[RMDB]
RNA sequence: GGGAACGACUCGAGUAGAGUCGAAAAGCGGAUUCCAGACUGUGUGGUGCUCUUUGUGUCCCCAGACGCUCCCAGACGGGUCUUGUGCUACGUCAUCGAGUUUAAGACCACUUGCUCGGACGCCGAUGGGCAGUCCGUGCGGGAGCACGUCACGCACAAUACUAGUUCGCUUCGGCGAACUAGUAUUAAAAGAAACAACAACAACAAC
Reactivity to 2A3 in 0.01 (KOAc 150mM, MgCl2 10mM, bicine 150mM(pH8.5), 24C), signal-to-noise 1, nucleotides 027 to 156: g180c070g010g020a020u180u060c050c060a070g000a060c020u020g040u040g000u050g110g060u030g040c000u110c030u070u070u090g050u020g000u110c000c000c000c000a040g030a040c050g000c000u050c000c000c000a010g060a100c140g010g060g000u020c010u040u020g020u010g030c000u080a290c050g210u250c220a220u190c040g000a020g000u050u010u060a000a000g000a010c070c040a060c100u000u110g000c010u020c020g000g000a000c000g000c020c000g170a210u300g090g020g000c080a210g000u050c000c010g000u000g000c010g040g000g000a000g000c000a010c020g000u020c010a060c000g000c020a000c040